[RMDB]
RNA sequence: GGGAACGACUCGAGUAGAGUCGAAAACUUGUUCGUCAACAUGUUGAGUUUUAUCGUAAUGCGCUUACAAUUCCUGACGAAGAUAUCGUUGUGUUCACCGGAGAGGUAAGUCCAGAUGAUAGAGCAGCGCUCUGGGAUGACGCACAAGUCGUCAUCGAUCCGCUACUACUUUCGAGUAGUAGCGGAUAAAAGAAACAACAACAACAAC
Reactivity to DMS in 0.01 (KOAc 150mM, MgCl2 10mM, bicine 150mM(pH8.5), 24C), signal-to-noise 2, nucleotides 027 to 156: c000u000u000g000u000u000c020g020u000c010a100a090c080a070u000g010u010u020g000a190g020u000u000u000u000a030u010c050g020u000a160a130u000g020c080g030c020u000u000a080c030a080a130u010u000c010c000u010g010a100c000g010a040a100g000a180u000a070u000c150g010u000u010g050u000g040u000u010c020a120c000c030g000g010a000g020a120g010g000u020a040a090g000u000c080c030a100g000a120u000g010a080u000a080g000a080g020c040a130g000c070g030c050u000c020u000g000g020g020a080u000g020a040c010g020c030a260c140a040a110g020u000c030g010u000c010a050u010c000g000
Reactivity to 2A3 in 0.01 (KOAc 150mM, MgCl2 10mM, bicine 150mM(pH8.5), 24C), signal-to-noise 3, nucleotides 027 to 156: c030u050u040g010u130u040c030g010u050c080a040a060c010a180u150g090u080u120g110a080g050u010u020u030u070a090u040c070g020u080a100a090u100g030c030g000c070u030u020a000c020a060a100u060u000c010c010u040g020a020c020g030a040a040g130a070u210a080u190c140g030u020u100g050u030g030u050u060c030a050c060c020g030g000a040g010a060g010g080u030a040a040g030u010c050c000a030g000a110u120g020a020u090a070g060a010g010c040a000g070c030g000c060u010c030u060g020g000g020a030u020g000a010c000g020c030a020c040a190a080g050u100c030g040u020c010a040u030c000g010